[RMDB]
The record gives the reactivity of an RNA of 207 nucleotides to DMS and 2A3.
Source: RMDB library OK3TST, as collected in RNAgym.
The reactions ran in a buffer of 150 mM KOAc, 10 mM MgCl2 and 150 mM bicine (pH 8.5), at 24 C.
Reactivities are given for positions 27 through 156.
For 2A3, 1,077 sequencing reads were counted.
RNA sequence: GGGAACGACUCGAGUAGAGUCGAAAACAUUCGAGAACAUCAAGACUUGCACUUCAGACCUAAUAGCCAGCCUAUCGUUGGAACUAACAUUUGCUGUCAAUGGACAGUUUGAAAAGGCCUAUGAAGUUAGAACUAAGCAGUGCAAGUUGGGAGGCAAGAUCCCUCUCUCUUUCGAGAGAGAGGGAUCAAAAGAAACAACAACAACAAC
Reactivity to DMS in 0.01 (KOAc 150mM, MgCl2 10mM, bicine 150mM(pH8.5), 24C), signal-to-noise 1, nucleotides 027 to 156: c060a210u000u010c070g010a200g050a010a050c060a100u000c040a030a250g000a040c010u000u010g040c040a020c000u000u000c020a130g000a000c080c000u010a070a130u000a150g000c000c040a060g000c000c040u020a050u000c030g000u020u000g070g010a060a090c130u000a020a010c070a080u020u000u030g060c010u010g010u010c010a170a160u000g010g020a000c020a030g000u000u000u000g010a050a050a140a120g000g000c010c000u030a050u000g010a080a070g020u000u000a010g000a090a220c050u000a090a070g000c130a040g020u030g040c000a000a050g020u000u000g000g020g040a220g010g030c040a000a170
Reactivity to 2A3 in 0.01 (KOAc 150mM, MgCl2 10mM, bicine 150mM(pH8.5), 24C), signal-to-noise 2, nucleotides 027 to 156: c050a100u140u170c060g000a010g050a150a080c000a110u070c020a070a000g020a000c020u000u010g000c020a000c000u000u090c030a090g010a100c010c030u060a020a000u030a080g100c060c090a010g040c000c040u100a090u070c050g030u030u120g100g000a060a090c060u030a080a000c010a100u020u040u220g020c010u000g010u030c000a100a130u100g020g050a010c020a040g050u000u070u030g020a020a030a010a020g000g000c000c000u060a060u110g010a130a000g020u030u040a020g040a150a030c080u060a070a000g060c040a020g020u000g000c000a000a000g040u000u000g000g000g040a010g030g010c000a070a080